[RMDB]
RNA sequence: GGGAACGACUCGAGUAGAGUCGAAAAUUGUUUAAGAUUUGUAAUAAGGACUUUGCUGGCGUUCACCCUGCUCAUGCAGUAACAACGUAUGCAUUGUCGUCAAAUUAUAAAGUGGGUGAGGGUCUUGCUGCAUUGGUUAAUGCCAAUGUGGGAGACGACCUCUUUCACGGUUCGCCGUGAAAGAGGUAAAAGAAACAACAACAACAAC
Reactivity to 2A3 in 0.01 (KOAc 150mM, MgCl2 10mM, bicine 150mM(pH8.5), 24C), signal-to-noise 1, nucleotides 027 to 156: u020u030g040u000u040u010a040a020g030a120u040u100u140g040u060a060a100u060a110a220g000g000a000c000u010u000u000g010c000u000g140g020c000g020u000u020c030a050c050c010c000u000g000c010u060c250a160u300g000c010a000g000u030a000a000c000a000a030c050g090u090a020u090g000c000a000u000u000g000u000c000g020u050c040a090a090a000u020u000a010u070a040a000a040g050u100g070g020g090u200g030a020g090g050g000u000c000u000u000g300c000u060g000c000a000u000u000g020g030u000u300a240a070u300g000c000c000a000a000u000g000u000g000g000g000a000g000a000c030g030
Record summary
The record gives the reactivity of an RNA of 207 nucleotides to 2A3. 2A3 adducts were read by reverse transcription with SuperScript II with manganese. The RNA was probed in 150 mM KOAc, 10 mM MgCl2 and 150 mM bicine (pH 8.5) at 24 C.